[RMDB]
The data come from the RNA Mapping Database (RMDB), library OK2TST.
Structure probing data (2A3 and DMS) for a 177-nucleotide construct.
DMS (dimethyl sulfate) methylates the pairing face of unpaired adenines and cytosines.
RNA sequence: GGGAACGACUCGAGUAGAGUCGAAAAUGUUUUAGUAAUGGAAUAACUUGCUCUAAUAGCGUGGUUUUUCCUGAGCCACUGUAACCAGCAAAGCCAAUAAUAGGUGUCAUAAUUGCUCUCAAAUUAAAUCGUAAUAAGAGUUCGCUCUUAUUACGAUAAAAGAAACAACAACAACAAC
Reactivity to 2A3 in 0.01 (KOAc 150mM, MgCl2 10mM, bicine 150mM(pH8.5), 24C), signal-to-noise 4, nucleotides 027 to 126: u040g030u010u060u050u120a050g010u040a080a080u100g030g020a050a060u070a040a040c010u030u050g010c000u030c050u100a110a270u090a150g010c020g040u060g020g000u000u020u010u040u030c000c020u020g020a010g000c020c000a020c040u030g040u070a060a030c020c000a000g010c020a050a060a000g040c010c030a070a040u150a130a040u060a090g000g030u020g010u040c020a010u040a210a090u050u060g010c010u030c000u010c050a050a060a090u080u120a080a250
Reactivity to DMS in 0.01 (KOAc 150mM, MgCl2 10mM, bicine 150mM(pH8.5), 24C), signal-to-noise 7, nucleotides 027 to 126: u010g010u010u000u000u010a060g010u000a100a090u000g000g010a090a050u000a040a060c030u000u010g010c000u000c130u020a090a080u000a070g020c050g030u010g010g000u000u000u000u000u000c010c020u000g010a190g000c050c050a030c050u010g010u000a070a100c100c120a070g010c060a040a060a110g010c040c020a040a070u010a060a090u010a080g000g010u000g010u000c070a050u000a060a070u000u010g000c080u000c050u000c070a060a090a100u010u000a060a100
The 2A3 profile rests on 6,235 reads.